Source information: The data come from the RNA Mapping Database (RMDB), library OK1LIB. Structure probing data (DMS and 2A3) for a 177-nucleotide construct. Conditions: 150 mM KOAc, 10 mM MgCl2 and 150 mM bicine (pH 8.5), 24 C. For DMS, 1,045 sequencing reads were counted.

RNA sequence: GGGAACGACUCGAGUAGAGUCGAAAAAAAGCGUAUUAGAAGAAUUAAGAAAAUAAAGUUAAAUCUUAUACUAGCUGUUUAAAGCUCAAGAUAAGACAUAAAUAGCCUACGAAAGUGACUUUAAUAAACCUGAUCCUAAAUUCGUUUAGGAUCAGGUAAAAGAAACAACAACAACAAC
Reactivity to DMS in 0.01 (KOAc 150mM, MgCl2 10mM, bicine 150mM(pH8.5), 24C), signal-to-noise 1, nucleotides 027 to 126: a020a020a030g010c050g050u000a070u080u010a130g000a160a150g000a210a160u010u040a050a230g010a120a030a050a150u000a000a020a070g000u000u040a000a060a180u030c000u000u010a000u000a090c040u000a080g030c000u010g000u010u080u050a090a060a000g030c000u000c050a100a080g000a050u000a010a000g000a030c070a160u000a070a200a030u000a000g010c050c010u000a070c060g010a010a040a060g010u000g000a110c020u000u050u000a030a080u000a030a030
Reactivity to 2A3 in 0.01 (KOAc 150mM, MgCl2 10mM, bicine 150mM(pH8.5), 24C), signal-to-noise 1, nucleotides 027 to 126: a000a000a000g070c070g070u060a150u080u130a170g100a160a040g040a040a120u190u260a090a060g030a080a180a110a140u110a040a020a000g000u000u050a030a160a090u090c000u040u030a000u000a030c030u080a040g020c030u020g060u030u280u130a100a120a030g000c000u000c050a010a010g000a020u000a070a050g000a010c000a030u050a010a060a030u000a030g060c010c010u080a090c040g090a040a070a000g020u050g060a000c000u030u040u100a220a150u180a030a150